[RMDB]
RNA sequence: GGGAACGACUCGAGUAGAGUCGAAAAACUAUGGGUUUAGCGACCUUGCGUUUAGGGCGUAUCAAGGGGGUUGAAAGGCCUGCUAUUUGCACUUUAAUGCCUAGCGUUGGCAAACGCCCUAGCGUGCAGCCAAUAAGACAUUCGUGUCUUAUUGGCUAAAAGAAACAACAACAACAAC
Reactivity to DMS in 0.01 (KOAc 150mM, MgCl2 10mM, bicine 150mM(pH8.5), 24C), signal-to-noise 9, nucleotides 027 to 126: a110c060u000a100u010g000g010g010u000u000u000a150g020c300g000a040c020c010u000u000g010c020g010u000u010u000a010g010g000g010c000g020u000a120u010c170a080a100g000g010g010g000g010u000u000g000a160a140a100g010g010c020c040u000g010c020u000a060u010u010u010g020c030a060c160u000u010u010a090a120u000g010c010c260u000a040g000c040g020u000u010g010g020c080a060a080a030c030g010c000c000c000u000a020g000c020g010u000g010c220
Reactivity to 2A3 in 0.01 (KOAc 150mM, MgCl2 10mM, bicine 150mM(pH8.5), 24C), signal-to-noise 9, nucleotides 027 to 126: a000c080u090a180u170g040g000g010u020u030u050a040g010c030g020a020c010c000u010u130g010c010g000u090u180u150a010g000g000g000c020g020u050a070u270c120a090a140g060g000g010g000g030u010u040g060a070a030a020g050g000c010c040u020g040c010u060a130u140u130u150g030c020a030c050u080u090u220a150a030u080g010c010c020u030a050g080c050g160u100u060g020g000c010a080a060a020c000g000c000c010c000u000a000g000c000g000u020g010c000